[RMDB]
Record summary
The record gives the reactivity of an RNA of 207 nucleotides to 2A3 and DMS. Conditions: 150 mM KOAc, 10 mM MgCl2 and 150 mM bicine (pH 8.5), 24 C.
RNA sequence: GGGAACGACUCGAGUAGAGUCGAAAAAAGGGAAAAUAUUUGUUAAGUCAAAGGAAGUAUUUUCUUCAUCUUUGUAAACAUAAGUCUCUACAGCACCGUAAUCCAUAUAACCUCAGCGUCAAGUCAGAUUUUUUUUAUUGCCUGAAAACUGCUAAGAAAUAGUAAUGCAUUUCGAUGCAUUACUAUUAAAAGAAACAACAACAACAAC
Reactivity to 2A3 in 0.01 (KOAc 150mM, MgCl2 10mM, bicine 150mM(pH8.5), 24C), signal-to-noise 3, nucleotides 027 to 156: a020a000g130g000g010a150a090a040a040u160a070u110u100u060g060u070u070a130a120g040u100c030a040a010a010g000g000a010a000g010u050a110u110u150u120u030c000u010u020c020a100u030c020u030u020u040g060u090a080a100a010c020a020u070a050a100g030u000c000u010c020u060a060c020a050g020c040a020c020c010g020u060a040a040u050c020c010a060u060a010u030a140a020c020c000u020c040a010g010c010g040u030c030a000a050g030u000c020a010g020a070u000u030u020u030u000u000u090u090a130u190u080g030c010c000u000g000a030a020a030a070c060u100g000c040u070a070a040g060a070
Reactivity to DMS in 0.01 (KOAc 150mM, MgCl2 10mM, bicine 150mM(pH8.5), 24C), signal-to-noise 1, nucleotides 027 to 156: a100a080g010g000g000a010a030a030a100u000a070u000u000u000g020u000u010a070a230g000u000c090a060a090a100g050g000a060a070g000u000a050u000u000u000u010c010u010u000c030a110u000c020u000u000u010g010u000a080a050a060c080a070u000a060a110g000u000c020u000c030u000a030c040a040g020c050a050c060c000g000u010a050a150u000c020c010a040u000a070u010a040a060c000c010u020c020a050g000c000g010u010c020a030a110g010u000c070a110g000a020u000u000u000u000u000u000u000u000a080u000u020g020c040c040u000g000a040a080a030a050c060u010g010c040u010a080a100g000a070